RNA sequence: GGGAACGACUCGAGUAGAGUCGAAAAUAGGUGUAUGUUUAGGAUUUCAAUGUAUCGUGUCUUAUUUUGGUGGAAAUAUCAUUCACGGCUAUCAUCCUGUACACGGACAUACUACACAGUUACGCCACCCUAUCCCAGUCUUCGGACUGGGAUAGGGAAAAGAAACAACAACAACAAC
Reactivity to DMS in 0.01 (KOAc 150mM, MgCl2 10mM, bicine 150mM(pH8.5), 24C), signal-to-noise 1, nucleotides 027 to 126: u050a120g010g010u020g000u010a070u000g020u030u000u020a060g000g000a130u020u050u100c300a140a020u000g000u030a060u000c060g000u000g000u000c010u010u000a100u010u000u030u000g000g090u010g020g080a060a060a030u050a050u000c140a100u000u010c130a050c070g000g010c040u010a090u000c130a000u000c080c000u000g020u040a030c150a050c070g050g000a000c010a010u030a050c050u000a050c060a000c000a020g030u020u000a000c060g020c000c060a090
Reactivity to 2A3 in 0.01 (KOAc 150mM, MgCl2 10mM, bicine 150mM(pH8.5), 24C), signal-to-noise 4, nucleotides 027 to 126: u180a000g000g000u020g040u010a030u030g050u000u040u020a030g010g020a230u100u180u200c180a150a060u060g010u050a280u130c020g000u010g050u010c050u060u140a210u090u170u110u080g080g000u080g050g100a060a070a000u230a080u080c130a060u150u100c030a070c050g090g000c020u030a020u130c020a060u120c020c080u060g030u060a000c000a000c030g010g000a010c000a030u000a000c000u040a010c030a000c010a020g070u150u040a010c010g000c010c000a040
Structure probing data (DMS and 2A3) for a 177-nucleotide construct. The data come from the RNA Mapping Database (RMDB), library OK1LIB. For 2A3, 2,115 sequencing reads were counted. For DMS, 1,586 sequencing reads were counted. 2A3 adducts were read by reverse transcription with SuperScript II with manganese. The reactions ran in a buffer of 150 mM KOAc, 10 mM MgCl2 and 150 mM bicine (pH 8.5), at 24 C.